Chemical mapping of a 207-nucleotide RNA with DMS and 2A3. Values are in units of 0.01, from 0 to 300, in steps of 10. For 2A3 the reverse transcriptase was SuperScript II with manganese. For DMS, 2,875 sequencing reads were counted. The reactions ran in a buffer of 150 mM KOAc, 10 mM MgCl2 and 150 mM bicine (pH 8.5), at 24 C. For DMS the reverse transcriptase was MarathonRT.
RNA sequence: GGGAACGACUCGAGUAGAGUCGAAAAGAAAUUCACGAUCGGCGGUAAAGUCCGCGAGCCGAACGAAAAAGGUUUGGCAGGAACCGGUGAGAUUCCGGUACCGACAGUAUAGUCUGGAUGGAAGAAGGUAGCCUCCUCUCGUUCGCGAGAGGAGGAAGUUGAUUAUUGUCUUCGGACAAUAAUCAACAAAAGAAACAACAACAACAAC
Reactivity to DMS in 0.01 (KOAc 150mM, MgCl2 10mM, bicine 150mM(pH8.5), 24C), signal-to-noise 1, nucleotides 027 to 156: g010a070a050a060u000u000c040a070c070g040a110u010c020g000g000c000g010g010u010a090a190a060g070u000c010c000g010c010g010a240g010c000c000g020a030a150c000g010a030a130a170a210a200g010g020u000u000u010g020g010c020a110g000g000a020a010c040c030g010g000u000g010a300g000a300u010u010c010c000g000g010u000a000c010c000g000a060c050a100g050u010a160u010a080g030u010c010u000g010g000a120u010g000g010a110a070g000a110a060g010g010u000a150g010c030c020u000c010c000u000c010u010c000g000u000u020c120g010c000g020a030g010a050g010g000a010g000g010a000a000
Reactivity to 2A3 in 0.01 (KOAc 150mM, MgCl2 10mM, bicine 150mM(pH8.5), 24C), signal-to-noise 2, nucleotides 027 to 156: g000a010a040a010u100u060c030a010c140g080a120u050c020g040g000c000g000g000u000a000a010a010g000u000c000c000g000c000g000a010g000c000c000g010a000a010c020g080a140a050a070a030a040g110g000u000u000u010g000g000c000a000g000g030a000a000c000c000g000g000u010g000a010g000a000u000u000c000c000g000g000u000a000c000c000g020a000c010a000g010u020a040u050a150g100u020c060u060g050g050a050u040g040g060a060a040g030a040a060g070g000u060a040g050c000c000u000c020c000u000c000u010c000g020u070u040c170g040c010g140a000g020a020g010g050a000g010g000a000a000